[RMDB]
RNA sequence: GGGAACGACUCGAGUAGAGUCGAAAAAUGUGAUAAACCUAUGCGGUACUGAUUUUCCACUUAAGACGAACCUAGAGAUAGUGAGGCAGCUCAAGUCACUCGACGGCGCUAACAGUCUAGAGACUGAACGUAUGCCGCCACACAAAAUGGUCAGGUGAAAAAGUUAGCGAUUCGUCGCUAACUUUUUAAAAGAAACAACAACAACAAC
Reactivity to 2A3 in 0.01 (KOAc 150mM, MgCl2 10mM, bicine 150mM(pH8.5), 24C), signal-to-noise 1, nucleotides 027 to 156: a010u050g020u070g020a070u160a140a060a030c000c030u050a080u200g050c080g000g040u040a080c070u000g050a070u040u000u030u040c040c010a030c050u090u080a060a060g060a020c040g020a000a030c000c000u000a020g010a040g010a100u030a060g090u000g010a040g010g030c010a050g000c000u040c050a000a050g040u000c010a020c070u010c050g010a040c060g020g020c030g000c060u020a080a050c010a020g000u000c010u060a040g050a060g020a160c070u020g030a150a000c010g030u030a060u060g010c000c000g030c020c000a020c000a000c010a030a050a050a000u040g000g020u010c000a000g000g020u060g010
Reactivity to DMS in 0.01 (KOAc 150mM, MgCl2 10mM, bicine 150mM(pH8.5), 24C), signal-to-noise 2, nucleotides 027 to 156: a080u000g030u010g050a080u020a040a130a140c020c020u000a120u000g050c060g010g010u000a240c060u010g000a140u000u000u010u020c010c060a040c020u000u030a100a100g040a110c030g000a050a080c040c010u000a140g000a170g000a100u010a120g010u010g020a080g030g020c000a050g020c040u000c060a050a080g010u000c040a070c070u000c010g040a010c060g020g060c010g000c130u000a070a200c020a060g000u000c000u000a190g000a200g000a030c010u000g020a020a040c130g030u000a050u010g070c020c010g000c010c030a110c040a120c110a080a040a080a130u010g010g010u000c050a060g000g000u000g010

Structure probing data (2A3 and DMS) for a 207-nucleotide construct. Source: RMDB library OK3TST, as collected in RNAgym. For DMS, 2,804 sequencing reads were counted. For 2A3 the reverse transcriptase was SuperScript II with manganese. Values cover nucleotides 27 to 156.